Source: RMDB library OK2TRN, as collected in RNAgym. The record gives the reactivity of an RNA of 177 nucleotides to DMS and 2A3. Reactivities are given for positions 27 through 126. The 2A3 profile rests on 14,760 reads.
RNA sequence: GGGAACGACUCGAGUAGAGUCGAAAAGUGCGGGCUAGUACCCAACCGUCAGAUGCUCUUCGCCCCGGUCCGCCAACGGGGGUGUGCAUGUGUGCGCCGACUGAGCUGUUACCUAACAUGCUGCGGAGCACUGUACUCAAUUCGUUGAGUACAGUGCAAAAGAAACAACAACAACAAC
Reactivity to DMS in 0.01 (KOAc 150mM, MgCl2 10mM, bicine 150mM(pH8.5), 24C), signal-to-noise 7, nucleotides 027 to 126: g010u010g010c080g000g010g020c070u010a100g010u000a130c020c010c020a120a120c090c040g000u010c050a080g000a060u000g010c020u000c050u000u000c080g010c020c000c000c010g010g010u010c040c030g010c050c040a120a090c040g000g010g000g020g020u010g020u000g010c020a030u010g020u000g020u000g010c040g020c030c030g010a100c080u000g000a060g020c010u000g010u000u010a140c100c090u000a070a070c100a050u000g020c030u000g010c050g000g010a220
Reactivity to 2A3 in 0.01 (KOAc 150mM, MgCl2 10mM, bicine 150mM(pH8.5), 24C), signal-to-noise 6, nucleotides 027 to 126: g090u070g030c040g000g020g010c080u100a040g060u150a150c020c000c010a020a040c020c000g060u020c030a020g020a150u060g010c000u000c000u160u110c060g160c010c000c000c010g020g020u010c020c020g020c020c020a060a030c030g020g000g000g010g020u040g010u000g010c040a050u080g050u060g020u030g140c030g000c000c020g060a080c050u070g010a000g010c020u040g060u050u080a120c010c030u040a060a040c010a070u120g000c020u050g010c030g040g010a030